An RNA of 207 nucleotides, treated with 2A3 and read out base by base. The RNA was probed in 150 mM KOAc, 10 mM MgCl2 and 150 mM bicine (pH 8.5) at 24 C. Values cover nucleotides 27 to 156. The 2A3 profile rests on 818 reads.
RNA sequence: GGGAACGACUCGAGUAGAGUCGAAAAACGACCACUAUGGCUUACGAGCCGUAGUGGUCGACGGUAGCUGGAUAAAACCGGGCCAUUGGCCAAACCCAGCCCAUCAACUGCAGCACCUGUCCCGCAAGUGAGGAACCUUGCUUCGGCAAGGUUCCAAGUACGUCAUUACCUUCGGGUAAUGACGUACAAAAGAAACAACAACAACAAC
Reactivity to 2A3 in 0.01 (KOAc 150mM, MgCl2 10mM, bicine 150mM(pH8.5), 24C), signal-to-noise 1, nucleotides 027 to 156: a000c010g000a000c000c000a000c000u000a000u000g000g020c000u040u040a040c270g040a050g000c000c010g000u010a000g010u010g000g000u000c020g000a000c000g020g000u020a030g000c000u000g050g010a100u100a220a100a000a040c000c050g000g000g000c030c010a230u200u300g030g000c060c120a030a000a070c020c000c000a020g020c000c010c020a030u060c020a010a090c050u110g010c020a050g000c000a010c030c040u040g020u020c030c000c020g030c100a090a080g110u080g060a130g050g000a000a000c000c000u000u020g010c000u000u080c220g030g040c010a000a000g000g000u000u000c000c000a000a000